The record gives the reactivity of an RNA of 207 nucleotides to 2A3.
The 2A3 profile rests on 1,288 reads.
The data come from the RNA Mapping Database (RMDB), library RNAMAK.

RNA sequence: GGGAACGACUCGAGUAGAGUCGAAAAGGGGUCACUUCGAUGAGGACUCCAAAGCUAUGAAGUGUGCUGAAGCCUCCACGGCACAUGGAGCUUUGAGGUCCGAGAAGUGACGGAGGCACCCAAAAGAAUAUUCAAGCCUUCGGGCUUGAAUAUUCAACUCACCUGUUGGUUUCGACCAACAGGUGAGAAAAGAAACAACAACAACAAC
Reactivity to 2A3 in 0.01 (KOAc 150mM, MgCl2 10mM, bicine 150mM(pH8.5), 24C), signal-to-noise 1, nucleotides 027 to 156: g080g000g170g010u000c000a010c010u010u020c030g250a300u300g040a030g000g020a000c000u030c020c040a000a000a000g030c070u090a190u300g000a010a000g000u010g000u000g030c000u020g050a070a020g010c000c000u010c000c000a000c000g000g000c000a010c000a010u010g010g010a000g010c010u000u010u010g030a050g010g000u010c010c000g000a020g000a000a010g000u000g000a000c000g010g000a000g000g000c040a020c010c010c000a020a100a020a050g010a010a000u010a000u000u000c010a000a000g010c000c030u170u220c300g030g010g010c010u000u010g000a000a000u000a000u000u000c000a010a000